[RMDB]
RNA sequence: GGGAACGACUCGAGUAGAGUCGAAAACUGGACGAAGGUCAGAAAGUAUCCUUCACCAUCGAAAGCGGCGCUAAAGGCCCGGCAGCUGGCAACGUAACUUCUCUGUAAGUUCAAGCCGCUAAGAAUCGUAUUACUUGUGGUUCGCCACAAGUAAUACAAAAGAAACAACAACAACAAC
Reactivity to DMS in 0.01 (KOAc 150mM, MgCl2 10mM, bicine 150mM(pH8.5), 24C), signal-to-noise 2, nucleotides 027 to 126: c080u000g010g010a100c120g020a040a040g030g000u020c070a110g020a130a130a160g040u010a060u000c000c010u000u000c030a230c030c030a110u000c020g010a110a130a060g000c050g000g000c000g000c120u000a050a150a120g000g010c010c040c050g000g040c140a050g000c060u000g020g050c060a050a110c150g020u010a030a010c010u000u000c020u020c190u030g000u020a010a030g010u000u000c020a140a200g010c010c000g020c010u000a030a150g030a080a120u030c140
Reactivity to 2A3 in 0.01 (KOAc 150mM, MgCl2 10mM, bicine 150mM(pH8.5), 24C), signal-to-noise 2, nucleotides 027 to 126: c000u010g020g040a020c070g010a040a000g040g030u120c080a070g190a100a240a010g090u150a060u180c020c000u020u000c020a000c000c020a120u050c020g060a100a030a000g020c000g010g000c030g010c140u140a110a080a060g080g020c030c000c010g080g000c030a030g030c040u050g000g030c010a050a010c040g030u050a010a010c000u070u000c170u000c060u160g200u290a000a000g010u010u000c000a020a010g000c000c030g000c000u020a030a010g040a030a040u160c070